[RMDB]
Chemical mapping of a 177-nucleotide RNA with DMS and 2A3. For 2A3 the reverse transcriptase was SuperScript II with manganese. Reactivities are given for positions 27 through 126. The RNA was probed in 150 mM KOAc, 10 mM MgCl2 and 150 mM bicine (pH 8.5) at 24 C. DMS adducts were read by reverse transcription with MarathonRT.

RNA sequence: GGGAACGACUCGAGUAGAGUCGAAAAUUGGUGAGGUAACGGCUCACCAAGGCUAAGAUGCCUAGGGGGUGUGAGAGCAUGGCCCCCACCACUGGGACUGAGACACUGCCCAGACACCUGCGGGUGGCCCUAAUAUGUUCUUCGGAACAUAUUAGGGAAAAGAAACAACAACAACAAC
Reactivity to DMS in 0.01 (KOAc 150mM, MgCl2 10mM, bicine 150mM(pH8.5), 24C), signal-to-noise 9, nucleotides 027 to 126: u010u010g010g010u000g010a010g010g010u010a100a240c300g000g010c000u000c000a020c000c000a020a010g000g010c060u000a110a120g010a090u020g010c000c010u010a090g010g020g010g010g010u000g020u010g000a190g010a130g010c050a070u020g020g010c010c000c010c000c010a020c070c060a170c030u010g010g000g000a080c070u020g000a130g010a120c170a120c130u020g000c000c000c010a040g000a160c030a030c010c010u010g010c130g020g010g020u000g000g010
Reactivity to 2A3 in 0.01 (KOAc 150mM, MgCl2 10mM, bicine 150mM(pH8.5), 24C), signal-to-noise 9, nucleotides 027 to 126: u050u040g000g000u010g000a010g010g010u030a050a020c020g070g010c010u000c000a000c000c000a000a000g000g000c000u080a120a090g070a180u260g020c010c030u070a080g010g010g000g010g000u060g010u070g070a220g010a020g150c060a060u090g070g020c000c000c020c000c000a010c000c000a020c010u010g000g000g080a080c020u070g080a060g040a120c070a030c130u080g020c000c000c000a000g010a010c010a010c000c000u040g010c180g070g010g000u020g020g020